[RMDB]
RNA sequence: GGGAACGACUCGAGUAGAGUCGAAAAGCUCAAGGCGCUGGGCUGGACCAGCGAGCAGAUUGUCGAGCGGUUCGGGUUCUCCGAGAUCAUGCGAUCGACGCUGGAGAAGGACAACACCGUCGGCACCACGAAUACAAGGUUUCGACCUUGUAUUCGUAAAAGAAACAACAACAACAAC
Reactivity to 2A3 in 0.01 (KOAc 150mM, MgCl2 10mM, bicine 150mM(pH8.5), 24C), signal-to-noise 6, nucleotides 027 to 126: g010c010u010c040a020a110g240g010c050g000c020u020g000g040g020c090u220g110g120a300c010c000a010g010c010g010a020g010c010a030g030a160u080u100g000u020c020g000a110g070c010g020g010u030u080c070g030g040g020u030u010c020u000c020c010g060a060g010a100u060c030a100u300g180c170g050a020u050c030g110a120c100g020c160u160g010g000a030g010a020a020g060g110a040c030a090a020c010a040c020c010g020u020c010g010g000c010a000c010c020
Reactivity to DMS in 0.01 (KOAc 150mM, MgCl2 10mM, bicine 150mM(pH8.5), 24C), signal-to-noise 7, nucleotides 027 to 126: g000c010u000c020a150a150g020g010c100g010c010u000g010g010g010c170u020g000g000a170c020c000a030g000c010g010a090g010c100a080g010a140u010u000g010u000c010g010a090g030c000g000g010u000u000c300g010g000g010u010u000c040u010c000c000g000a190g000a030u000c020a090u020g000c200g000a050u000c040g010a100c200g000c110u020g000g000a050g000a070a040g000g010a120c060a060a110c240a020c010c010g010u000c020g010g000c030a050c120c060

About this RNA: An RNA of 177 nucleotides, treated with 2A3 and DMS and read out base by base. The reactions ran in a buffer of 150 mM KOAc, 10 mM MgCl2 and 150 mM bicine (pH 8.5), at 24 C. The data come from the RNA Mapping Database (RMDB), library OK2TRN. High 2A3 reactivity points to a flexible backbone, as in loops and unpaired stretches.